[RMDB]
RNA sequence: GGGAACGACUCGAGUAGAGUCGAAAAAGUUAUGCGUGUGAUUGGGAGCUUUUGCGUUAUGAUGGUAAUCCGUGGUCCACUGUUACGCAUGGUACACAUAUAGGUGCAAUGGUGCAAAAAUAUGGUGUCAACAGGCAAGGCAAGGGGCUGCUUUGGGCCCUGAAACUGAUUUCGAUCAGUUUCAGGGAAAAGAAACAACAACAACAAC
Reactivity to 2A3 in 0.01 (KOAc 150mM, MgCl2 10mM, bicine 150mM(pH8.5), 24C), signal-to-noise 6, nucleotides 027 to 156: a000g110u120u080a040u090g050c040g000u050g020u040g030a070u020u100g030g010g010a060g020c010u100u080u100u090g030c040g040u060u050a060u120g090a040u050g020g030u080a080a060u030c050c050g040u050g010g020u020c020c020a060c070u030g050u070u090a030c060g010c020a000u030g020g050u100a040c120a000c020a020u050a010u050a190g120g010u020g010c020a060a150u170g120g020u070g050c030a000a040a040a040a000u090a040u090g070g000u020g020u020c010a020a040c020a090g070g000c020a030a080g030g000c010a030a040g010g000g010g010c020u030g010c010u060u040u040g030g010g000
Reactivity to DMS in 0.01 (KOAc 150mM, MgCl2 10mM, bicine 150mM(pH8.5), 24C), signal-to-noise 2, nucleotides 027 to 156: a100g000u000u000a060u000g040c030g040u000g070u000g010a160u000u000g010g000g020a170g010c050u000u010u000u000g030c030g000u020u000a050u020g020a070u000g020g030u000a070a100u000c060c090g070u010g000g020u010c020c020a050c040u000g000u000u000a050c160g040c010a060u000g000g020u010a030c040a030c000a070u000a120u010a060g000g040u000g010c030a050a130u000g040g000u000g030c020a010a050a080a090a050u000a060u010g010g020u000g010u000c040a040a040c000a050g020g020c020a080a180g000g030c020a050a060g030g000g030g020c020u010g010c040u010u010u000g010g000g020
This 207-nucleotide RNA was probed chemically with 2A3 and DMS. Values cover nucleotides 27 to 156. The 2A3 profile rests on 6,313 reads. The DMS profile rests on 5,397 reads. The reactions ran in a buffer of 150 mM KOAc, 10 mM MgCl2 and 150 mM bicine (pH 8.5), at 24 C.